[RMDB]
RNA sequence: GGGAACGACUCGAGUAGAGUCGAAAACGAAUGGAGUUCGCUCCAUUCGAAAUCCCAGGGAACGACUGGAGUAGAGUCGAAAAUCCCACUCAACUCAACUCAAAAGCGAAUGCUUCGGCAUUCGCAAGUAUUAAAAGGAGUUCGCUCCUUUUAAUACAAAAGAAACAACAACAACAAC
Reactivity to 2A3 in 0.01 (KOAc 150mM, MgCl2 10mM, bicine 150mM(pH8.5), 24C), signal-to-noise 4, nucleotides 027 to 126: c000g000a010a000u000g020g000a020g010u040u060c100g130c060u010c010c000a000u000u010c000g000a020a000a020u010c010c000c020a030g000g000g000a060a030c020g010a000c030u050g300g030a050g100u150a050g030a010g050u010c010g000a030a010a000a030u010c000c010c010a020c020u090c010a010a130c020u030c080a020a050c010u050c120a050a100a080a030g010c000g000a010a000u000g000c000u060u080c240g050g000c000a000u000u000c000g000c000a000a000
Reactivity to DMS in 0.01 (KOAc 150mM, MgCl2 10mM, bicine 150mM(pH8.5), 24C), signal-to-noise 2, nucleotides 027 to 126: c000g000a010a000u010g000g000a020g030u010u000c290g030c000u000c000c000a010u000u000c000g010a010a120a130u000c000c000c000a150g000g000g020a080a040c110g010a040c130u010g000g000a050g010u000a060g000a000g000u000c020g000a010a030a080a120u010c000c010c000a150c130u000c060a040a010c030u000c030a110a040c040u000c020a090a100a090a100g010c000g010a010a000u000g020c000u000u020c220g020g000c010a010u000u000c000g020c000a010a010
This 177-nucleotide RNA was probed chemically with 2A3 and DMS. Reactivities are rounded to 0.1 and cut off at 0 and 3. 2A3 adducts were read by reverse transcription with SuperScript II with manganese. For 2A3, 7,508 sequencing reads were counted. DMS adducts were read by reverse transcription with MarathonRT. The reactions ran in a buffer of 150 mM KOAc, 10 mM MgCl2 and 150 mM bicine (pH 8.5), at 24 C.